[RMDB]
RNA sequence: GGGAACGACUCGAGUAGAGUCGAAAAAGUGCCUGAGCUGGUCGACGUCCAGCUCCCUCGGGACCUGCUGCUCUGGGCGGAAGAGUCUUCUGACACUUCUAGCCUAUUCAGCUUCGCGUCCUUGAGGCCUGGCGUAACGCGGCUCUUGCCACCAGGACCCUUACAUCUCGUUCGCGAGAUGUAAGGGAAAAGAAACAACAACAACAAC
Reactivity to 2A3 in 0.01 (KOAc 150mM, MgCl2 10mM, bicine 150mM(pH8.5), 24C), signal-to-noise 1, nucleotides 027 to 156: a000g030u050g000c010c000u000g000a010g000c000u040g040g070u300c010g010a000c000g050u070c000c000a000g000c020u300c000c000c000u000c000g000g000g000a000c000c010u050g000c000u000g000c000u000c000u000g020g010g000c000g020g000a000a000g040a010g000u000c050u300u200c260u300g020a010c020a010c060u000u000c000u030a090g000c000c020u000a000u020u140c010a000g000c000u020u060c030g000c060g000u000c010c010u040u300g020a000g000g010c000c000u000g000g000c000g000u000a000a020c000g010c000g010g010c000u000c010u000u040g000c000c000a000c000c000a020g020g140a100

This 207-nucleotide RNA was probed chemically with 2A3. The data come from the RNA Mapping Database (RMDB), library VIROID. Values cover nucleotides 27 to 156. For 2A3, 720 sequencing reads were counted.